Chemical mapping of a 177-nucleotide RNA with DMS and 2A3. The 2A3 profile rests on 11,901 reads.
[RMDB]
RNA sequence: GGGAACGACUCGAGUAGAGUCGAAAAUAUAAAUUGACCAUAAAUGAAGAUCAUAAGAAUUGUCAUCGAUGGGCUGGUAGACAUCUGACUAAUUUACAAUCUGGAUGUAAGUACAGAAAACUGAUUGAUUACUAUCAUAGUUCGCUAUGAUAGUAAUAAAAGAAACAACAACAACAAC
Reactivity to DMS in 0.01 (KOAc 150mM, MgCl2 10mM, bicine 150mM(pH8.5), 24C), signal-to-noise 9, nucleotides 027 to 126: u000a130u010a050a100a130u000u000g010a150c020c010a090u010a070a090a110u010g010a100a100g010a040u000c040a090u010a090a110g000a070a040u000u000g010u000c030a030u010c150g010a050u000g010g000g020c030u000g010g020u010a060g010a050c040a020u000c020u000g010a060c050u020a040a040u000u000u010a100c170a050a080u010c040u000g000g000a060u000g010u010a050a070g010u000a090c050a050g000a050a060a060a110c180u000g000a090u010u000g000
Reactivity to 2A3 in 0.01 (KOAc 150mM, MgCl2 10mM, bicine 150mM(pH8.5), 24C), signal-to-noise 7, nucleotides 027 to 126: u110a010u020a020a100a070u090u090g040a050c010c010a030u070a080a150a040u140g050a070a040g040a080u070c030a050u070a220a060g070a160a060u090u030g020u020c010a020u050c070g040a030u030g000g100g000c040u040g070g000u020a030g030a070c010a020u000c010u020g010a030c020u050a050a100u060u070u050a040c040a040a080u000c010u030g050g010a030u050g070u100a050a080g030u050a050c020a030g100a060a070a020a030c050u060g020a120u080u060g050